[RMDB]
RNA sequence: GGGAACGACUCGAGUAGAGUCGAAAAGCAUUUGGGGGGAAUUCAUCUCUCUUUAAUAUAAAGUUGGAUGCGGAACCCAAAUUACGUGUACUACAAUUUAAAGCAAAGGAGUAGAAAGACAGAGCUACCUAAUGGAGGUGUUCGCACCUCCAUUAGGAAAAGAAACAACAACAACAAC
Reactivity to DMS in 0.01 (KOAc 150mM, MgCl2 10mM, bicine 150mM(pH8.5), 24C), signal-to-noise 1, nucleotides 027 to 126: g100c110a040u010u000u020g000g000g000g000g030g000a220a270u000u000c010a020u000c010u000c040u000c000u000u000u000a100a080u020a120u010a030a010a000g000u000u000g020g000a000u000g020c230g020g010a280a260c010c000c010a030a000a000u010u000a070c140g040u000g030u000a150c050u000a060c070a070a120u000u000u000a050a130a150g000c170a010a050a070g000g000a300g010u000a030g020a040a060a070g010a050c090a050g010a110g010c090u000a120
Structure probing data (DMS) for a 177-nucleotide construct. Source: RMDB library OK2TRN, as collected in RNAgym. Reactivities are given for positions 27 through 126.